[RMDB]
RNA sequence: GGGAACGACUCGAGUAGAGUCGAAAAGAUAUGGACCCAUCGCAAGAGGUGGGAGCAAAUUCGGAAACGAAAACUCCCACUACCCACCUUGGAUGGGUCCUAAGUCAAACUAUCGUUCGCGAUAGAAGACCAUAUCAAAGUUCGCUUUGAUAUGGUCAAAAGAAACAACAACAACAAC
Reactivity to DMS in 0.01 (KOAc 150mM, MgCl2 10mM, bicine 150mM(pH8.5), 24C), signal-to-noise 5, nucleotides 027 to 126: g010a060u000a300u000g000g000a010c010c000c000a010u000c000g020c020a030a010g020a080g020g020u010g010g010g010a020g030c090a080a120a100u000u000c010g000g000a070a090a150c000g000a000a010a110a100c000u000c000c000c000a010c020u000a040c020c060c150a300c080c000u000u000g010g000a030u000g010g000g000u010c000c000u000a000a050g020u000c030a110a110a140c000u000a000u000c010g000u000u000c220g010c020g000a020u000a020g000a100a150
Reactivity to 2A3 in 0.01 (KOAc 150mM, MgCl2 10mM, bicine 150mM(pH8.5), 24C), signal-to-noise 2, nucleotides 027 to 126: g000a030u050a040u110g000g010a010c000c020c020a010u010c170g180c140a010a000g010a040g050g010u010g020g040g040a000g030c060a010a140a050u080u020c010g030g020a060a040a040c010g020a000a010a110a120c020u010c000c000c000a000c000u010a010c010c020c010a120c010c000u000u000g010g000a000u000g000g010g010u000c000c000u010a000a000g000u000c000a000a030a090c020u010a000u020c000g050u080u060c300g000c020g100a010u000a010g030a040a020
Chemical mapping of a 177-nucleotide RNA with DMS and 2A3. Values cover nucleotides 27 to 126. The data come from the RNA Mapping Database (RMDB), library TTRDEL. For DMS, 4,376 sequencing reads were counted. For 2A3, 11,527 sequencing reads were counted. For DMS the reverse transcriptase was MarathonRT.